[RMDB]
RNA sequence: GGGAACGACUCGAGUAGAGUCGAAAAGAAAGGUCCUAAACAGGGGAUUUGGUUCUUAUUUUUGCUAUCAAGCAGAAGAGUCAAAACUGUAGGAGUCUAAACCAAAUCAGGUCCACCUGGGAGUCUUUAAAGUUCAGGGUUACUUAGCAUGGGGAUAGCUUAGAAUUUAUUUCGAUAAAUUCUAAGCAAAAGAAACAACAACAACAAC
Reactivity to 2A3 in 0.01 (KOAc 150mM, MgCl2 10mM, bicine 150mM(pH8.5), 24C), signal-to-noise 2, nucleotides 027 to 156: g050a020a060a000g030g010u030c020c000u050a060a010a110c010a000g040g000g010g090a030u000u020u020g010g010u020u030c050u030u130a240u170u110u040u090u040g000c030u070a070u300c030a120a070g000c030a000g020a080a010g020a010g040u050c020a090a010a040a070c070u060g020u100a010g010g070a000g010u030c120u210a010a040a110c020c050a050a030a030u070c040a020g010g010u020c030c000a030c010c040u000g000g020g030a010g020u000c030u020u130u140a050a150a060g000u000u080c040a000g030g000g000u050u020a010c010u050u050a030g010c020a020u130g050g020g020g070a020u200a040
Reactivity to DMS in 0.01 (KOAc 150mM, MgCl2 10mM, bicine 150mM(pH8.5), 24C), signal-to-noise 1, nucleotides 027 to 156: g030a070a070a130g000g020u010c020c020u000a060a090a300c060a110g010g000g020g010a090u000u030u000g020g000u000u000c040u010u010a180u010u000u000u000u000g010c030u000a190u010c210a120a130g040c020a050g000a080a020g010a060g000u010c030a020a010a070a090c030u000g000u000a110g030g060a050g000u010c020u000a050a080a110c040c020a030a070a130u010c000a050g000g000u000c060c050a040c020c030u040g000g000g010a080g020u000c030u000u000u000a080a070a050g010u010u000c050a080g030g050g020u000u000a050c050u000u010a080g060c070a090u010g000g000g000g030a090u000a140